An RNA of 177 nucleotides, treated with DMS and 2A3 and read out base by base.
[RMDB]
RNA sequence: GGGAACGACUCGAGUAGAGUCGAAAAGGCAAGUUCGUGUCCGUCACAGUUAAGGCCACCGAUCAGGGUGAUCCCAGUCUAGAGGGUGUCUGCUCCUUCACCGUGGAAAUCACAGAUGUAAACGAUACUGUACUUGAGGAUUCGUCCUCAAGUACAGAAAAGAAACAACAACAACAAC
Reactivity to DMS in 0.01 (KOAc 150mM, MgCl2 10mM, bicine 150mM(pH8.5), 24C), signal-to-noise 6, nucleotides 027 to 126: g010g000c060a070a100g020u010u000c070g020u020g020u010c040c080g000u000c070a130c090a070g000u000u000a080a070g000g020c070c020a070c050c030g000a100u000c090a130g030g000g020u000g010a090u000c020c030c010a150g010u010c080u000a090g010a090g020g010g010u000g020u000c060u000g010c080u010c030c030u000u000c040a050c060c030g000u010g010g010a060a050a080u010c050a050c060a090g010a080u010g000u000a070a060a090c120g000a150u000a120
Reactivity to 2A3 in 0.01 (KOAc 150mM, MgCl2 10mM, bicine 150mM(pH8.5), 24C), signal-to-noise 4, nucleotides 027 to 126: g060g010c060a050a050g030u050u090c040g040u060g040u020c020c030g070u060c020a040c030a110g040u070u110a080a020g060g000c020c020a030c020c020g020a050u080c040a030g080g000g060u040g040a030u040c000c020c000a010g030u010c040u090a050g020a070g080g030g010u010g020u010c030u050g030c030u010c000c000u050u050c030a060c050c030g020u060g040g090a080a130a070u160c020a050c030a080g070a080u090g070u200a060a090a040c060g020a020u090a130

It was measured as part of the RMDB library OK2TST.